[RMDB]
RNA sequence: GGGAACGACUCGAGUAGAGUCGAAAAUGUUGGAGAAGCCAGAAGUGUUGCUUUAGUGGUAGUUGUAUCACGGGAAGUGACAUUCAUGCCCGCCCCACCUGCCGUCUCCCACCAGCAUGUGAUGGAGCUGAGUUACGCUAUUCGUAGCGUAACUCAGAAAAGAAACAACAACAACAAC
Reactivity to DMS in 0.01 (KOAc 150mM, MgCl2 10mM, bicine 150mM(pH8.5), 24C), signal-to-noise 3, nucleotides 027 to 126: u000g000u010u000g010g020a160g010a120a140g010c060c060a100g010a160a060g010u000g000u010u000g000c000u000u000u000a200g020u000g010g000u000a030g020u020u000g010u000a020u000c010a000c030g000g010g010a020a020g010u000g010a000c010a050u000u010c090a120u000g010c030c040c040g000c030c010c050c020a070c050c060u000g000c030c040g020u010c050u010c030c000c030a140c080c050a030g010c050a050u000g010u000g000a100u000g020g000a190g010
Reactivity to 2A3 in 0.01 (KOAc 150mM, MgCl2 10mM, bicine 150mM(pH8.5), 24C), signal-to-noise 2, nucleotides 027 to 126: u070g000u030u040g060g030a090g010a200a020g060c030c010a020g060a190a040g090u010g020u030u010g000c000u020u000u050a020g000u010g050g000u010a030g110u060u300g270u150a020u020c000a000c000g060g060g020a020a000g010u010g000a010c020a020u000u050c040a020u150g040c030c020c010g040c020c000c010c000a010c040c030u050g040c010c030g060u010c020u010c000c010c000a080c050c000a020g050c040a010u090g040u010g000a080u050g060g050a040g050